[RMDB]
RNA sequence: GGGAACGACUCGAGUAGAGUCGAAAAGAUAUGGAAAUCGCGAUAAGCUGGUGUCGGAAACGACACACAGCUUUUGACGCGGAUUCCUAAGUCAAAAGUGAAAUCAGCCUUCGGGCUGAUUUCACAACAGUGACAAUGAGUUCGCUCAUUGUCACUGAAAAGAAACAACAACAACAAC
Reactivity to 2A3 in 0.01 (KOAc 150mM, MgCl2 10mM, bicine 150mM(pH8.5), 24C), signal-to-noise 1, nucleotides 027 to 126: g000a000u030a000u050g000g000a000a010a050u050c010g000c010g050a070u060a300a030g020c010u000g000g000u000g000u000c020g000g060a080a010a040c010g000a010c000a010c030a010c000a000g000c000u040u020u000u040g010a020c000g000c010g000g000a000u010u000c000c000u030a060a030g010u020c040a070a070a080a050g000u010g000a020a000a010u000c000a010g000c020c030u110u170c300g000g030g010c010u000g010a000u000u000u010c000a000c000a000a000
Reactivity to DMS in 0.01 (KOAc 150mM, MgCl2 10mM, bicine 150mM(pH8.5), 24C), signal-to-noise 2, nucleotides 027 to 126: g000a020u000a200u010g000g000a000a000a070u000c000g010c010g020a140u010a030a020g030c000u000g000g020u000g010u000c000g030g010a070a040a120c020g000a020c000a000c000a030c000a010g000c000u000u000u000u000g000a190c010g000c000g010g010a070u000u000c000c000u000a010a120g000u010c040a070a050a110a120g000u000g000a010a000a010u000c000a000g030c000c000u000u010c250g040g010g010c010u000g000a000u000u000u000c000a000c010a000a060
Chemical mapping of a 177-nucleotide RNA with 2A3 and DMS. Values cover nucleotides 27 to 126. The 2A3 profile rests on 3,300 reads. It was measured as part of the RMDB library TTRDEL.